This 177-nucleotide RNA was probed chemically with DMS and 2A3. 2A3 adducts were read by reverse transcription with SuperScript II with manganese. It was measured as part of the RMDB libraries RFM100 and RFMREP. The RNA was probed in 150 mM KOAc, 10 mM MgCl2 and 150 mM bicine (pH 8.5) at 24 C.
RNA sequence: GGGAACGACUCGAGUAGAGUCGAAAAUGAUUCGGUAACCGAAUCGGGAGCACCAUCUGCGUAGGCUUGUGGUUUAAGGCUUGCGCCACCUACGGUCUUGGAUAGCCCCCGCCAGGCAGGGACCCCAUUACGCACAAUAUUUCGAUAUUGUGCGUAAAAAAGAAACAACAACAACAAC
Reactivity to DMS in 0.01 (KOAc 150mM, MgCl2 10mM, bicine 150mM(pH8.5), 24C), signal-to-noise 9, nucleotides 027 to 126: u040g010a020u000u000c000g010g010u040a140a140c090c010g000a020a020u010c010g010g020g020a110g010c080a100c040c030a080u010c060u000g010c050g020u010a040g000g000c070u000u020g040u010g010g010u010u010u030a080a050g020g000c020u000u030g000c170g010c000c090a040c030c020u010a040c060g000g000u010c020u000u000g010g000a090u020a130g010c020c010c010c020c030g000c040c030a050g000g000c050a080g000g000g000a140c030c000c010c030a170
Reactivity to 2A3 in 0.01 (KOAc 150mM, MgCl2 10mM, bicine 150mM(pH8.5), 24C), signal-to-noise 9, nucleotides 027 to 126: u130g000a000u010u020c020g010g080u180a150a190c110c000g010a010a000u010c000g010g030g000a050g010c020a040c040c000a030u030c040u140g040c020g030u040a020g020g030c030u080u120g070u110g080g130u090u090u160a080a050g030g010c030u050u090g020c060g000c010c000a030c000c000u040a030c040g040g030u040c030u050u070g050g030a080u060a090g010c000c000c000c000c000g010c020c020a030g010g020c020a020g000g020g040a060c000c000c000c010a000